[RMDB]
RNA sequence: GGGAACGACUCGAGUAGAGUCGAAAAUAGCAGACGACGUGAUAACGUCGCCAAACAAACACGCGAAAGCGUUUGAGAACGAAGUCACCGACACUGUGCCUCAAAUGGCACUCGUCGAUGGGAAAGACGGGGAUGAUAACGUUAUCCGUGGCGAAGAGGAGAUAAACCUUUUCGAAGGUUUAUCUCCAAAAGAAACAACAACAACAAC
Reactivity to 2A3 in 0.01 (KOAc 150mM, MgCl2 10mM, bicine 150mM(pH8.5), 24C), signal-to-noise 3, nucleotides 027 to 156: u130a030g100c130a030g020a080c050g000a000c000g070u090g110a170u150a240a030c000g010u030c010g010c020c010a100a050a030c060a020a040a030c040a000c040g070c000g020a070a000a090g010c020g010u000u020u100g060a070g040a080a040c030g020a060a000g060u050c000a020c050c020g020a000c050a030c150u040g010u010g040c050c010u150c080a080a130a070u290g000g000c020a000c010u020c010g010u000c000g030a070u140g030g000g020a040a190a100g010a020c000g040g000g010g020a040u070g010a030u050a110a000c000g000u010u000a010u000c000c000g000u020g020g000c030g070a040a030g020a060
Reactivity to DMS in 0.01 (KOAc 150mM, MgCl2 10mM, bicine 150mM(pH8.5), 24C), signal-to-noise 1, nucleotides 027 to 156: u010a040g020c030a170g010a070c010g010a000c000g030u000g020a160u000a120a040c060g000u000c040g000c010c020a050a090a130c030a050a160a020c000a070c000g000c060g020a120a120a110g000c010g030u000u000u000g000a300g010a100a110c040g030a090a130g010u020c000a010c030c010g020a020c020a070c000u000g000u000g020c100c000u000c080a130a130a120u020g000g040c020a020c040u000c000g020u000c000g020a000u000g000g020g000a070a070a130g010a180c070g000g000g030g020a090u000g020a140u010a090a090c110g040u000u000a100u000c010c040g030u000g000g050c030g020a080a200g000a300